[RMDB]
RNA sequence: GGGAACGACUCGAGUAGAGUCGAAAAAGGACUGCCAGUGCCAAACUGGAGGAAGGAACGGGCAACGGUAGGUCAGUAUGCCCCGAAUGUGCUGGGCGACACGCGGGCUACAAUGGCCGAGACAGUGAAAGCGACAUUAAUUCGUUAAUGUCGCUUUAAAAGAAACAACAACAACAAC
Reactivity to 2A3 in 0.01 (KOAc 150mM, MgCl2 10mM, bicine 150mM(pH8.5), 24C), signal-to-noise 6, nucleotides 027 to 126: a000g080g020a040c030u040g010c000c000a020g020u030g090c040c050a090a120a010c020u020g020g020a010g020g010a070a060g050g020a060a050c100g010g040g000c010a050a010c030g070g030u080a040g020g020u010c020a010g020u040a040u240g020c020c000c010c020g080a150a120u230g010u020g040c040u130g040g110g010c040g020a020c010a000c030g020c090g000g000g000c000u000a000c030a070a280u050g010g000c000c000g000a000g010a010c070a020g040u030g170
Reactivity to DMS in 0.01 (KOAc 150mM, MgCl2 10mM, bicine 150mM(pH8.5), 24C), signal-to-noise 8, nucleotides 027 to 126: a080g000g000a050c040u020g000c010c000a010g000u000g020c080c100a060a090a080c010u010g000g000a070g000g010a090a050g000g010a100a090c150g000g000g020c060a070a070c110g010g010u010a090g010g010u000c020a070g010u010a030u030g000c050c010c000c020g000a060a090u020g010u010g010c050u000g010g010g020c040g010a130c050a030c110g020c080g010g000g000c010u010a040c060a090a100u010g010g000c010c000g000a130g000a070c120a050g000u030g010

Conditions: 150 mM KOAc, 10 mM MgCl2 and 150 mM bicine (pH 8.5), 24 C. An RNA of 177 nucleotides, treated with 2A3 and DMS and read out base by base. Values cover nucleotides 27 to 126. Source: RMDB libraries RFM100 and RFMREP, as collected in RNAgym.